Structure probing data (2A3 and DMS) for a 207-nucleotide construct. Conditions: 150 mM KOAc, 10 mM MgCl2 and 150 mM bicine (pH 8.5), 24 C. For 2A3, 2,886 sequencing reads were counted. DMS adducts were read by reverse transcription with MarathonRT. DMS (dimethyl sulfate) methylates the pairing face of unpaired adenines and cytosines.
[RMDB]
RNA sequence: GGGAACGACUCGAGUAGAGUCGAAAAGCAAAAACCUGAGCAUCCCGCCAACGGGGAUAAUCGUUGGCUCCCGCACAGUGGGUCAACCGUGCUAAGCCUGUGAACGAGCGGAAAGUUACUAGUCAAUGCGGACAGCGGUUCGAUUCCGCUCAGCUCCGUUCUAAAAGUAGUUCGCUACUUUUAGAACAAAAGAAACAACAACAACAAC
Reactivity to 2A3 in 0.01 (KOAc 150mM, MgCl2 10mM, bicine 150mM(pH8.5), 24C), signal-to-noise 4, nucleotides 027 to 156: g020c030a050a060a040a100a110c030c040u060g020a030g030c000a080u050c000c000c010g000c000c010a000a020c010g000g020g030g010a030u190a110a070u150c010g000u000u000g000g000c010u010c000c000c000g050c000a030c010a040g030u080g000g000g060u060c060a030a030c060c030g010u030g010c020u040a070a030g010c000c040u090g030u050g130a100a030c040g000a000g000c000g040g020a050a040a000g060u090u070a060c040u050a040g030u070c050a100a180u200g060c070g070g020a020c020a030g030c050g100g000u020u040c010g030a070u050u030c000c000g010c000u000c010a000g000c010u040c050c060
Reactivity to DMS in 0.01 (KOAc 150mM, MgCl2 10mM, bicine 150mM(pH8.5), 24C), signal-to-noise 1, nucleotides 027 to 156: g000c010a070a050a140a080a170c010c030u000g000a140g020c030a240u010c010c000c000g030c000c050a070a010c000g040g000g000g000a180u000a060a140u040c010g000u020u000g000g000c010u010c000c000c050g000c060a040c080a110g000u000g060g010g010u000c120a050a050c030c040g020u000g000c010u000a120a150g000c050c010u000g010u000g020a080a050c030g000a090g030c000g030g010a080a040a080g000u010u000a060c050u010a150g020u000c040a120a190u000g030c090g060g020a080c070a070g020c070g050g020u010u010c070g000a300u000u000c000c010g000c000u010c020a030g000c020u000c040c090